[RMDB]
RNA sequence: GGGAACGACUCGAGUAGAGUCGAAAAGGACCUAAGCUGAGGCCGAAAGGCGUAGGUGAUGGACAACAGGUUGAUAUUCCUGUACUACCGAUAACCGUUUGAGAGAAGGGAUGACACAGUAGGAUAAGCUAAGCACACUGUUGGUUAUGUGUGCCCACUGAGGUGACCAGUUCGCUGGUCACCUCAGAAAAGAAACAACAACAACAAC
Reactivity to 2A3 in 0.01 (KOAc 150mM, MgCl2 10mM, bicine 150mM(pH8.5), 24C), signal-to-noise 1, nucleotides 027 to 156: g000g040a030c000c000u080a070a010g040c030u000g010a030g050g070c000c020g090a060a030a050g040g000c010g020u010a000g060g020u000g020a040u200g000g060a040c020a070a000c010a080g000g040u080u040g140a080u070a070u090u010c040c000u000g060u010a090c060u030a000c000c100g110a100u070a110a090c060c000g030u080u120u200g060a040g000a000g000a000a070g060g000g000a060u070g000a000c000a010c010a090g050u060a050g060g040a030u080a210a000g040c130u050a000a040g010c000a000c020a040c030u020g080u200u070g050g070u060u070a050u100g000u000g030u060g000c000c010c020a050